Source: RMDB libraries RFM100 and RFMREP, as collected in RNAgym.
This 177-nucleotide RNA was probed chemically with DMS and 2A3.
For DMS the reverse transcriptase was MarathonRT.
The 2A3 profile rests on 1,057 reads.
The reactions ran in a buffer of 150 mM KOAc, 10 mM MgCl2 and 150 mM bicine (pH 8.5), at 24 C.
For 2A3 the reverse transcriptase was SuperScript II with manganese.
[RMDB]
RNA sequence: GGGAACGACUCGAGUAGAGUCGAAAAAUCCGGGGAUAUCCGAAUGGGGUAACCUGAUCGAGGCAAUACUCGAUCGUUCAUACCUGAAUACAUAGGGUAUGAAACGCGAAACCCGCUGAAGUGAAACAGAAAGGAUCAUGUUCGCAUGAUCCUUUCUAAAAGAAACAACAACAACAAC
Reactivity to DMS in 0.01 (KOAc 150mM, MgCl2 10mM, bicine 150mM(pH8.5), 24C), signal-to-noise 2, nucleotides 027 to 126: a050u020c060c000g000g000g000g040a080u020a040u000c000c000g050a180a060u040g000g020g000g030u000a030a060c000c000u020g010a010u000c000g000a060g000g000c110a130a080u020a130c010u000c000g000a000u010c000g030u000u000c010a000u000a000c010c010u000g000a160a200u030a140c110a030u010a300g000g000g000u010a020u000g000a000a030a030c000g000c140g000a050a070a090c000c000c040g030c120u040g000a050a140g020u010g000a070a110a090c190
Reactivity to 2A3 in 0.01 (KOAc 150mM, MgCl2 10mM, bicine 150mM(pH8.5), 24C), signal-to-noise 2, nucleotides 027 to 126: a000u010c000c000g010g000g030g040a030u010a020u030c000c000g080a230a230u300g070g020g010g000u010a010a020c000c000u000g000a000u010c010g000a000g000g040c170a190a060u140a180c000u000c000g000a000u000c000g010u000u000c000a000u010a000c000c010u000g040a040a040u090a020c030a030u070a030g010g000g000u000a000u000g000a060a030a000c050g000c040g010a080a050a060c000c000c000g000c050u160g030a160a110g120u080g150a020a080a020c040